[RMDB]
RNA sequence: GGGAACGACUCGAGUAGAGUCGAAAAAUACACCAGCAGUAGGACUCAGCGACCGUCACAACAAGGUUGUUCUGGUAUCCGACGGUCGUAUAGCCCUGUCUUGCAGGUUGCCUUGCACUGACGUGCCACACCAUUUACAGAUUCGUCUGUAAAUGAACGAAAAGCUAUGGUUCGCCAUAGCUUUUCGAAAAGAAACAACAACAACAAC
Reactivity to 2A3 in 0.01 (KOAc 150mM, MgCl2 10mM, bicine 150mM(pH8.5), 24C), signal-to-noise 3, nucleotides 027 to 156: a000u120a020c080a000c010c000a010g010c000a010g010u080a010g010g010a070c010u050c140a040g000c000g000a010c000c000g010u030c030a060c010a140a040c040a150a060g140g030u070u040g070u160u090c060u150g060g030u130a130u060c040c060g000a000c000g010g000u000c000g010u060a030u090a050g000c000c020c000u010g040u060c080u060u140g000c030a030g000g000u040u040g050c030c020u030u100g000c000a030c030u150g100a040c110g010u030g000c030c000a060c010a030c040c000a000u000u000u000a000c010a020g020a030u040u070c200g090u000c080u000g010u000a000a000a000u010g000a040a000
Reactivity to DMS in 0.01 (KOAc 150mM, MgCl2 10mM, bicine 150mM(pH8.5), 24C), signal-to-noise 2, nucleotides 027 to 156: a120u000a070c050a210c010c010a110g010c020a050g030u000a040g020g000a050c020u010c150a240g010c010g010a020c000c000g030u000c020a200c070a180a090c050a090a080g010g000u000u000g000u020u000c010u000g010g000u000a130u000c120c030g010a040c020g010g010u000c010g000u010a030u000a030g010c010c010c000u010g010u000c060u000u010g000c030a120g010g020u000u000g020c070c130u000u000g030c020a060c030u010g030a080c170g020u000g000c000c090a070c040a130c110c010a030u000u000u000a010c000a030g030a070u000u010c300g030u000c000u000g000u000a000a000a020u010g010a040a150

Structure probing data (2A3 and DMS) for a 207-nucleotide construct. For 2A3, 2,145 sequencing reads were counted. For 2A3 the reverse transcriptase was SuperScript II with manganese. The data come from the RNA Mapping Database (RMDB), library M2RFPK. Conditions: 150 mM KOAc, 10 mM MgCl2 and 150 mM bicine (pH 8.5), 24 C.